[RMDB]
The record gives the reactivity of an RNA of 177 nucleotides to 2A3 and DMS. For DMS the reverse transcriptase was MarathonRT. Conditions: 150 mM KOAc, 10 mM MgCl2 and 150 mM bicine (pH 8.5), 24 C. Reactivities are given for positions 27 through 126.
RNA sequence: GGGAACGACUCGAGUAGAGUCGAAAAUAACUAUACUGCAUCUAACUUGUGAUGUCAGCUCAUUUUGAAUAGGGAUGUUACAUGUCACGAGACUGUUGUAAUCAUCUUGGUUCUCAUGUCUCAAGGUAUGGACAUUCUAGUUCGCUAGAAUGUCCAUAAAAGAAACAACAACAACAAC
Reactivity to 2A3 in 0.01 (KOAc 150mM, MgCl2 10mM, bicine 150mM(pH8.5), 24C), signal-to-noise 6, nucleotides 027 to 126: u120a030a020c060u060a040u080a140c010u020g030c020a010u020c040u100a050a250c120u130u140g060u110g100a000u000g150u170c010a020g040c020u030c060a150u040u120u090u190g150a130a090u050a090g030g020g000a010u010g030u040u010a010c020a030u060g040u040c000a020c200g090a090g040a050c040u080g170u220u030g060u100a020a030u120c020a010u020c010u030u070g040g000u050u020c010u010c060a090u160g020u000c030u010c050a030a030g080g030u030
Reactivity to DMS in 0.01 (KOAc 150mM, MgCl2 10mM, bicine 150mM(pH8.5), 24C), signal-to-noise 3, nucleotides 027 to 126: u030a060a130c170u010a110u050a180c050u000g030c000a010u000c030u010a090a100c270u010u020g020u000g020a020u000g020u060c030a010g010c180u040c170a070u030u000u010u000g000a030a060u000a160g000g000g030a010u020g030u000u000a020c060a030u000g000u000c040a040c250g000a030g010a040c040u000g020u000u010g010u020a020a030u020c020a050u020c050u050u010g010g010u020u000c010u000c030a070u020g000u000c010u000c030a140a180g020g010u010